Chemical mapping of a 177-nucleotide RNA with DMS and 2A3.
RNA sequence: GGGAACGACUCGAGUAGAGUCGAAAAGAUAUGGAUCCUUGGGAUAGGCUUGGACCUCGGAAACGAGCUAGCCUGCCCACUGGGAUCCUAAGUCAAACGCACAUGGUUCUUCGGAACCAUGUGCGAACAAGGAGAAGUGGUUCGCCACUUCUCCUUGAAAAGAAACAACAACAACAAC
Reactivity to DMS in 0.01 (KOAc 150mM, MgCl2 10mM, bicine 150mM(pH8.5), 24C), signal-to-noise 4, nucleotides 027 to 126: g010a040u000a300u000g000g000a020u010c000c000u010u000g000g010g000a080u010a010g020g000c000u010u000g040g000a120c300c000u000c000g000g000a080a080a180c010g000a020g000c030u000a030g000c000c000u000g000c000c000c000a050c300u000g020g010g000a010u000c000c000u000a010a080g000u000c030a090a100a230c010g010c000a000c000a010u000g010g000u000u000c000u000u000c190g010g000a000a000c000c000a000u000g010u000g000c000g000a020a060
Reactivity to 2A3 in 0.01 (KOAc 150mM, MgCl2 10mM, bicine 150mM(pH8.5), 24C), signal-to-noise 2, nucleotides 027 to 126: g010a010u070a050u150g010g000a000u000c010c030u030u040g020g000g090a300u180a120g000g010c010u070u200g080g160a300c040c010u000c020g000g030a080a070a030c020g010a000g020c010u010a000g000c000c010u010g030c030c030c010a000c060u040g020g020g010a000u050c000c000u010a080a000g030u020c040a120a040a070c020g010c010a010c010a020u000g000g040u000u020c030u050u100c300g000g030a000a000c000c010a010u000g000u000g000c000g000a000a000
Notes
Values cover nucleotides 27 to 126. The RNA was probed in 150 mM KOAc, 10 mM MgCl2 and 150 mM bicine (pH 8.5) at 24 C. For DMS the reverse transcriptase was MarathonRT.